[RMDB]
Chemical mapping of a 177-nucleotide RNA with 2A3 and DMS. For 2A3 the reverse transcriptase was SuperScript II with manganese.
RNA sequence: GGGAACGACUCGAGUAGAGUCGAAAAAAGAUAUGGAGCGAUUCUCUAGCGUGGCCGAUGAAAUAUUACUCAGUAUUCGGAAACGAAUACGAAGGAAUAUGGAGGCUCGGGAUCGCUCCUAAGUCAAGCCUAACAAUAUCUUCGGAUAUUGUUAGGCAAAAGAAACAACAACAACAAC
Reactivity to 2A3 in 0.01 (KOAc 150mM, MgCl2 10mM, bicine 150mM(pH8.5), 24C), signal-to-noise 1, nucleotides 027 to 126: a110a000g060a030u050a020u130g010g010a000g000c010g010a030u110u070c110u090c100u220a120g090c070g260u300g070g000c030c000g180a300u060g020a020a040a000u070a000u020u070a110c020u030c260a050g000u000a010u020u010c010g030g000a160a040a040c030g000a030a000u030a000c020g020a040a030g020g020a000a030u020a020u040g000g000a010g040g030c000u000c030g000g000g000a000u000c000g000c020u000c000c000u010a020a020g030u000c030a000a060
Reactivity to DMS in 0.01 (KOAc 150mM, MgCl2 10mM, bicine 150mM(pH8.5), 24C), signal-to-noise 2, nucleotides 027 to 126: a090a050g010a000u010a300u030g000g020a060g020c000g010a060u000u000c000u020c200u010a130g020c200g040u040g040g020c000c010g000a090u030g000a090a100a000u000a010u000u010a080c020u030c100a300g010u010a000u010u010c010g010g020a080a060a280c010g020a010a010u000a000c020g000a290a070g000g000a010a010u000a000u000g000g030a120g000g010c000u000c120g020g000g000a110u000c020g000c020u000c000c000u000a000a050g000u000c030a170a120
The RNA was probed in 150 mM KOAc, 10 mM MgCl2 and 150 mM bicine (pH 8.5) at 24 C.